Chemical mapping of a 207-nucleotide RNA with 2A3. Conditions: 150 mM KOAc, 10 mM MgCl2 and 150 mM bicine (pH 8.5), 24 C. 2A3 adducts were read by reverse transcription with SuperScript II with manganese.

[RMDB]
RNA sequence: GGGAACGACUCGAGUAGAGUCGAAAAUCUUUACCUGUACGGCGGCCAACGGCGGCUCCAACUCGGCGAAAUGGUGUUAUGCGCCGUUUGAUAAAAUCAUUAUCGAAGCGCGUGCUUCACAGGAUCACGAACAGCGUAUUGCUUUGUACAAGCAGGCCAUGCCCAAAGUUUUCGAACUUUGGGCAUGAAAAGAAACAACAACAACAAC
Reactivity to 2A3 in 0.01 (KOAc 150mM, MgCl2 10mM, bicine 150mM(pH8.5), 24C), signal-to-noise 1, nucleotides 027 to 156: u010c020u040u160u080a060c020c000u000g000u010a060c010g010g040c040g040g000c010c000a170a040c040g050g040c000g050g010c110u090c090c000a050a070c020u040c060g040g000c020g070a100a010a060u020g010g020u040g020u200u200a120u180g040c040g000c000c040g070u000u050u050g040a020u090a020a120a050a090u140c160a160u030u100a020u090c020g030a010a010g040c050g010c020g040u020g070c000u040u020c000a020c000a020g040g060a060u120c010a020c080g020a060a020c060a050g080c010g080u190a100u100u040g000c060u050u070u040g070u070a100c040a040a000g040c050a000g080g020c010

For 2A3, 527 sequencing reads were counted. The data come from the RNA Mapping Database (RMDB), library OK3TST.